This 177-nucleotide RNA was probed chemically with DMS and 2A3. DMS adducts were read by reverse transcription with MarathonRT. 2A3 is a SHAPE reagent: it acylates the 2'-hydroxyl of flexible nucleotides of all four kinds. The reactions ran in a buffer of 150 mM KOAc, 10 mM MgCl2 and 150 mM bicine (pH 8.5), at 24 C. For DMS, 2,167 sequencing reads were counted. It was measured as part of the RMDB library TTRDES. Values cover nucleotides 27 to 126.
[RMDB]
RNA sequence: GGGAACGACUCGAGUAGAGUCGAAAAGAUAUGGAAAUAUCUGGGAUGGCGUUGAAACGAUCUCGGAAACGAGAUCGUGGAGCCAUUCAGAGUAUUUCCUAAGUCAAAACAUGGGUUCGCCCAUGAACUGGUAUGUGUAGUUCGCUACACAUACCAGAAAAGAAACAACAACAACAAC
Reactivity to DMS in 0.01 (KOAc 150mM, MgCl2 10mM, bicine 150mM(pH8.5), 24C), signal-to-noise 2, nucleotides 027 to 126: g000a020u010a300u020g010g000a040a020a010u000a020u000c020u010g050g000g010a020u010g010g020c000g020u000u010g000a150a190a020c000g010a000u000c000u000c000g010g010a090a090a160c000g020a020g010a010u000c010g010u000g000g010a100g020c000c000a010u000u010c000a020g010a080g020u010a010u000u000u000c000c000u000a040a100g000u010c020a120a100a150a160c030a000u000g000g000g000u010u010c300g030c010c000c000a010u000g000a070a230
Reactivity to 2A3 in 0.01 (KOAc 150mM, MgCl2 10mM, bicine 150mM(pH8.5), 24C), signal-to-noise 2, nucleotides 027 to 126: g010a010u100a060u120g000g000a040a000a030u040a020u060c070u120g090g100g050a040u010g000g030c040g210u300u060g000a020a000a000c010g000a010u030c000u000c000g030g060a100a050a030c000g000a000g010a000u000c000g030u000g000g010a000g000c020c020a010u000u000c000a000g000a000g030u060a020u000u030u000c000c010u030a150a020g080u030c020a020a050a130a170c000a020u020g000g050g010u050u040c300g090c040c000c000a000u020g020a100a140